[RMDB]
Structure probing data (DMS and 2A3) for a 177-nucleotide construct.
RNA sequence: GGGAACGACUCGAGUAGAGUCGAAAAAAACCGUCUACCCAGACUCCCGGUGUCGAGGUGGUUUGUGUAUCCCACUCGGCUACUCCCGGUAACUUGGGGUUUGUGUCGACAUAAGUUUCGUCCUAAAUCUUAGUACAAAGUUCGCUUUGUACUAAGAAAAAGAAACAACAACAACAAC
Reactivity to DMS in 0.01 (KOAc 150mM, MgCl2 10mM, bicine 150mM(pH8.5), 24C), signal-to-noise 4, nucleotides 027 to 126: a020a020a010c060c070g000u000c010u000a040c010c030c010a070g000a020c020u000c030c010c030g000g010u000g010u000c010g020a030g000g010u000g010g000u000u000u000g040u010g010u000a100u010c060c050c020a300c030u000c030g000g000c010u010a020c020u010c020c010c000g010g010u000a080a030c030u010u000g010g010g000g000u000u000u000g000u000g010u000c070g000a020c020a050u000a130a120g010u000u000u000c060g000u000c010c010u010a070a090a120
Reactivity to 2A3 in 0.01 (KOAc 150mM, MgCl2 10mM, bicine 150mM(pH8.5), 24C), signal-to-noise 2, nucleotides 027 to 126: a000a000a000c010c020g000u010c000u010a020c020c010c010a000g000a010c020u040c000c000c000g000g050u010g010u020c010g010a030g040g020u020g010g090u020u050u250g060u010g020u070a120u090c020c000c000a000c000u020c020g010g000c000u010a010c080u170c030c060c000g030g050u050a150a060c000u010u040g020g020g000g000u000u020u020g000u020g000u000c020g010a010c010a030u150a100a010g000u050u000u030c010g030u000c010c010u020a100a070a070
About this RNA:
The reactions ran in a buffer of 150 mM KOAc, 10 mM MgCl2 and 150 mM bicine (pH 8.5), at 24 C.